[RMDB]
RNA sequence: GGGAACGACUCGAGUAGAGUCGAAAAGUAAAGGCCGAACGAGGGCUAAUGCGCAUGCUAGAAAAUGGUAGGCCAUCGUAGUGUGAGCAUGAGCACGAAAGAAACACACACAUGCACGUGCAAAAAACACCUAUAGAACUUUCGAGUUCUAUAGGUGAAAAGAAACAACAACAACAAC
Reactivity to 2A3 in 0.01 (KOAc 150mM, MgCl2 10mM, bicine 150mM(pH8.5), 24C), signal-to-noise 2, nucleotides 027 to 126: g010u050a080a120a040g050g030c020c030g040a090a040c060g040a130g000g110g000c020u030a040a050u060g000c030g000c010a010u040g000c000u030a020g080a080a190a030a050u060g070g040u100a110g100g230c020c010a020u040c020g040u020a030g030u010g010u010g070a010g000c010a010u040g020a010g000c020a010c030g040a050a040a040g060a020a100a000c070a000c000a010c000a010c000a050u070g000c030a010c060g020u010g000c000a000a030a000a000a080a110
Reactivity to DMS in 0.01 (KOAc 150mM, MgCl2 10mM, bicine 150mM(pH8.5), 24C), signal-to-noise 4, nucleotides 027 to 126: g020u010a070a140a150g020g020c010c040g000a050a080c130g000a130g020g010g030c030u000a040a050u000g000c020g000c030a030u010g000c010u000a060g020a060a080a110a040u000g010g020u010a120g030g020c030c000a010u010c050g030u000a060g020u000g010u010g000a040g000c010a030u000g000a060g010c000a030c040g000a060a080a080g020a120a070a050c070a050c080a080c030a040c080a060u000g000c070a070c100g010u000g010c060a020a030a050a100a060a100